[RMDB]
RNA sequence: GGGAACGACUCGAGUAGAGUCGAAAAGAAUACUUUUAGUACAAGCGAGUACACGCAGUAUACUGCCACUUGUGUGAGUAUACUUUUAGUACAAGCGAGUACACGCAGUAUACUGCCACUUGUGAGAUACUCCAAUUAUCUUCGGAUAAUUGGAGUAAAAAGAAACAACAACAACAAC
Reactivity to DMS in 0.01 (KOAc 150mM, MgCl2 10mM, bicine 150mM(pH8.5), 24C), signal-to-noise 7, nucleotides 027 to 126: g000a190a140u030a060c030u000u010u010u010a110g010u010a140c090a070a300g020c030g000a060g020u050a050c150a170c300g000c070a000g020u000a000u000a000c000u000g000c000c170a020c010u010u000g020u020g000u020g020a170g010u000a020u010a090c130u030u020u010u020a100g020u030a010c030a060a240g000c020g010a010g010u030a040c150a160c300g000c090a010g010u000a000u000a010c020u000g000c010c100a020c000u000u010g010u000g000a170g000a170
Reactivity to 2A3 in 0.01 (KOAc 150mM, MgCl2 10mM, bicine 150mM(pH8.5), 24C), signal-to-noise 6, nucleotides 027 to 126: g060a040a040u250a170c070u110u130u120u190a120g060u100a060c050a130a010g010c000g040a000g030u130a060c090a020c120g000c000a000g010u000a000u000a000c000u030g000c010c000a030c020u040u000g030u030g010u070g220a050g090u090a010u040a080c000u040u130u140u280a020g000u010a010c000a010a000g020c000g000a000g020u070a060c040a010c030g010c000a000g000u000a000u000a010c000u010g010c010c010a010c010u030u020g020u030g060a060g010a050